An RNA of 177 nucleotides, treated with DMS and read out base by base. The DMS profile rests on 1,209 reads. Values cover nucleotides 27 to 126.
RNA sequence: GGGAACGACUCGAGUAGAGUCGAAAAAAAAAGGUAAAACAGCCUGUGGGUGAAACACACCCACAGGGCCCGUUGGGCGCUAGCACUCUGGUAUCACGGUACCUAUGUGCGCCUGUUUUACCAAAAAGAUAAUAACGAACUUCGGUUCGUUAUUAUCAAAAGAAACAACAACAACAAC
Reactivity to DMS in 0.01 (KOAc 150mM, MgCl2 10mM, bicine 150mM(pH8.5), 24C), signal-to-noise 1, nucleotides 027 to 126: a020a100a100a110a050g000g010u000a000a000a010a010c010a010g020c000c010u000g010u000g030g000g000u010g000a120a120a100c250a250c000a010c000c000c000a020c020a000g000g000g020c000c040c010g000u000u000g030g000g030c020g000c000u000a040g010c010a000c000u000c160u000g010g020u000a010u000c060a080c260g010g020u000a000c010c000u020a040u000g000u000g010c010g000c000c000u020g020u000u000u000u000a000c000c000a000a000a030a080a060
The reactions ran in a buffer of 150 mM KOAc, 10 mM MgCl2 and 150 mM bicine (pH 8.5), at 24 C.